[RMDB]
RNA sequence: GGGAACGACUCGAGUAGAGUCGAAAAUUGGCGAAUGCCUGUGGAUCUACAUUUGUUGCGGGUUCGAGACCCGUCAGAGCUCGGCUCUGUAGCUCAAUGGUAGAGCGGUGUAUUCACAUAAACUUGUAAAAGACACGUGCCUUCGGGCACGUGUCAAUCAACAAUACUACUUCGGUAGUAUUGUUGAAAAAGAAACAACAACAACAAC
Reactivity to DMS in 0.01 (KOAc 150mM, MgCl2 10mM, bicine 150mM(pH8.5), 24C), signal-to-noise 4, nucleotides 027 to 156: u000u000g000g000c020g010a090a050u000g020c030c020u000g050u010g030g000a080u000c020u010a030c020a050u000u010u010g000u000u000g030c010g010g010g020u000u000c050g020a300g000a050c000c050c010g010u010c020a030g030a020g010c040u010c120g050g000c040u020c020u020g020u000a040g030c000u000c030a050a080u010g030g010u020a050g010a040g070c020g000g010u000g010u020a100u000u000c000a020c010a100u000a080a070a130c100u000u010g000u000a070a050a110a160g010a030c000a010c010g040u000g000c000c000u000u000c300g030g020g020c000a000c000g030u000g000u000c000a010a030
Reactivity to 2A3 in 0.01 (KOAc 150mM, MgCl2 10mM, bicine 150mM(pH8.5), 24C), signal-to-noise 3, nucleotides 027 to 156: u040u040g030g000c030g090a250a050u300g020c010c000u000g000u000g010g020a010u000c060u080a010c020a030u050u050u100g050u040u010g000c000g010g000g020u000u000c000g010a010g020a030c010c000c000g000u000c010a000g000a000g000c060u090c300g150g000c000u000c020u020g000u000a000g010c010u010c010a030a030u200g250g020u150a020g000a000g010c020g000g000u030g000u010a040u020u030c010a000c000a020u120a010a120a030c100u130u210g060u180a030a060a040a040g000a000c000a000c000g000u000g000c020c020u030u090c210g040g010g010c020a010c000g020u000g000u000c000a000a000

About this RNA
Structure probing data (DMS and 2A3) for a 207-nucleotide construct. For DMS the reverse transcriptase was MarathonRT. The reactions ran in a buffer of 150 mM KOAc, 10 mM MgCl2 and 150 mM bicine (pH 8.5), at 24 C. Reactivities are rounded to 0.1 and cut off at 0 and 3. For 2A3, 1,898 sequencing reads were counted.